[RMDB]
RNA sequence: GGGAACGACUCGAGUAGAGUCGAAAAACAUGAUCAUCCAAGACGCGCUGAACCACCGCAGCCUGUUCGACGCCGCCAGGUUGUCCGGGGCCGACUUCACCUUGUACCGGCACAACGACAUGGACCACAAUCCCGCAUUGUUCGCAAUGCGGGAUUGAAAAGAAACAACAACAACAAC
Reactivity to 2A3 in 0.01 (KOAc 150mM, MgCl2 10mM, bicine 150mM(pH8.5), 24C), signal-to-noise 3, nucleotides 027 to 126: a020c060a080u130g020a080u080c040a000u040c040c020a070a030g090a060c010g020c020g000c050u030g030a050a030c040c000a040c020c010g010c030a000g030c010c020u090g050u070u080c050g050a020c060g020c040c020g030c010c000a020g000g010u090u050g050u050c010c050g000g030g070g020c000c030g030a060c000u120u040c030a040c030c000u000u090g020u030a040c020c000g040g030c050a020c010a150a000c020g040a000c010a100u120g050g030a020c000c040a040
Reactivity to DMS in 0.01 (KOAc 150mM, MgCl2 10mM, bicine 150mM(pH8.5), 24C), signal-to-noise 1, nucleotides 027 to 126: a100c240a150u040g000a010u030c060a020u000c030c030a040a080g040a090c120g000c060g030c030u000g010a060a140c070c110a000c010c000g000c030a000g000c000c000u010g000u000u010c020g000a080c030g010c050c010g000c050c070a020g000g000u020u000g020u000c010c000g000g000g030g000c020c020g000a050c000u000u000c030a070c040c020u000u000g010u000a010c010c000g020g010c080a040c090a030a020c110g010a110c110a040u000g000g000a170c040c000a110